[RMDB]
RNA sequence: GGGAACGACUCGAGUAGAGUCGAAAAAAAAAGAUAUGGAUCGCUACCCACCGUCAUAAAGCGAAGAACGACGGUCGGAAACGACCGUCGGGAGCUUGAAAUGACGAGGCGAUCCUAAGUCAAAAAAGACUUAUAAGCUGUUCGCAGCUUAUAAGUCAAAAGAAACAACAACAACAAC
Reactivity to DMS in 0.01 (KOAc 150mM, MgCl2 10mM, bicine 150mM(pH8.5), 24C), signal-to-noise 1, nucleotides 027 to 126: a080a000a130a130a150g000a130u010a130u000g030g000a020u000c000g010c000u000a170c090c000c000a300c170c010g000u000c000a000u010a110a040a010g000c000g000a180a160g020a240a170c040g000a000c000g010g030u010c000g010g000a120a050a090c040g000a000c010c000g010u000c000g000g000g000a200g040c000u000u020g030a090a090a110u000g000a010c010g000a090g010g010c000g000a000u000c000c000u000a040a070g000u090c070a050a050a110a100a160a160
Conditions: 150 mM KOAc, 10 mM MgCl2 and 150 mM bicine (pH 8.5), 24 C.
Structure probing data (DMS) for a 177-nucleotide construct.
Values cover nucleotides 27 to 126.
The DMS profile rests on 899 reads.
In probing experiments dimethyl sulfate is read out at A N1 and C N3, which are open when not base-paired.